[RMDB]
RNA sequence: GGGAACGACUCGAGUAGAGUCGAAAAUUGACCUGCAUGGAGACAACAGUUCAAGCAUCUGACUGAUGUUUUUUUGCACAAUGGUUCAAGAAAAUAGCAUGCAGUGCUCUAUGAGUAGUUAGCAGGCACACUGAAAUCUGUUCGCAGAUUUCAGUGUAAAAGAAACAACAACAACAAC
Reactivity to DMS in 0.01 (KOAc 150mM, MgCl2 10mM, bicine 150mM(pH8.5), 24C), signal-to-noise 3, nucleotides 027 to 126: u010u000g000a100c000c010u010g000c010a050u000g000g010a080g000a030c040a030a070c020a060g000u000u000c060a110a130g000c130a070u000c110u000g000a040c000u010g000a100u000g010u000u000u000u000u000u040u000g000c030a030c220a140a130u010g000g000u000u000c020a010a020g010a090a020a060a050u010a090g030c000a030u000g010c020a060g020u000g010c010u000c030u000a130u020g000a060g030u000a050g000u000u010a080g040c030a010g000g020c030
Reactivity to 2A3 in 0.01 (KOAc 150mM, MgCl2 10mM, bicine 150mM(pH8.5), 24C), signal-to-noise 2, nucleotides 027 to 126: u050u040g030a030c000c000u000g010c010a000u070g060g040a030g000a060c000a030a010c000a050g030u160u140c040a080a050g090c020a200u060c050u100g040a050c010u010g000a030u000g030u000u010u020u000u010u040u010g000c050a000c070a100a220u210g130g030u140u110c020a030a020g060a090a070a000a000u110a020g010c000a000u020g000c000a010g030u010g030c000u000c050u140a170u230g060a020g020u060a020g010u000u120a030g000c000a010g000g000c010